Chemical mapping of a 177-nucleotide RNA with 2A3 and DMS. The reactions ran in a buffer of 150 mM KOAc, 10 mM MgCl2 and 150 mM bicine (pH 8.5), at 24 C. Values are in units of 0.01, from 0 to 300, in steps of 10. 2A3 adducts were read by reverse transcription with SuperScript II with manganese. For 2A3, 6,232 sequencing reads were counted. Reactivities are given for positions 27 through 126.
RNA sequence: GGGAACGACUCGAGUAGAGUCGAAAAGAAAAAGCUGACGAGAAAGGAUCGAAGAUCCUGAAUCGUUUGACAGUCUGUUAUGGAAAGUCAACAGGUUAAACAGCGAAACGCAGAAAAUGCGAAGAAAGGGUAACAUAAAGUUCGCUUUAUGUUACCCAAAAGAAACAACAACAACAAC
Reactivity to 2A3 in 0.01 (KOAc 150mM, MgCl2 10mM, bicine 150mM(pH8.5), 24C), signal-to-noise 4, nucleotides 027 to 126: g050a000a060a000a010a000g020c000u000g020a010c020g020a000g080a070a060a000g020g000a000u040c110g150a230a070g010a020u000c010c000u010g020a010a010u000c000g010u020u040u000g020a010c000a000g050u000c010u010g070u100u080a110u240g170g040a190a090a050g090u130c050a000a030c000a030g020g040u050u130a080a090a020c040a040g010c040g100a090a010a010c000g000c000a000g090a030a200a030a030u030g010c010g000a060a000g100a100a060a000
Reactivity to DMS in 0.01 (KOAc 150mM, MgCl2 10mM, bicine 150mM(pH8.5), 24C), signal-to-noise 8, nucleotides 027 to 126: g010a080a070a080a090a180g010c010u000g000a070c010g000a020g000a160a140a010g000g000a000u000c000g020a170a120g000a010u000c000c000u000g000a260a270u010c010g020u000u010u010g010a060c070a050g000u000c010u000g010u020u060a090u070g000g030a040a070a060g000u010c050a010a020c140a070g010g000u020u020a070a100a170c030a010g010c020g000a090a110a140c030g010c000a020g010a080a040a110a090u000g000c000g010a120a100g020a090a080a110